[RMDB]
RNA sequence: GGGAACGACUCGAGUAGAGUCGAAAAGAUAUGGACCCGAAUAGGGCUGGUGUUAUUUGAUAGUCUCAUACUCGGAAACGAGUACUAGAGAGUCAAAUAACACCAGCCCUAUUCAGGGUCCUAAGUCCUGUGGAAAUAUGUUCGCAUAUUUCCACAGAAAAGAAACAACAACAACAAC
Reactivity to DMS in 0.01 (KOAc 150mM, MgCl2 10mM, bicine 150mM(pH8.5), 24C), signal-to-noise 1, nucleotides 027 to 126: g000a120u000a300u000g010g010a000c000c000c010g000a020a000u000a020g030g000g020c000u000g000g000u000g000u000u000a020u000u000u000g000a010u000a080g000u010c000u000c000a180u000a000c000u000c010g000g020a120a130a300c000g020a030g000u000a010c270u000a070g000a020g080a300g000u000c000a000a000a020u000a000a000c000a000c010c010a020g020c010c000c010u000a000u000u000c000a060g100g020g000u000c000c000u020a000a130g010u000c030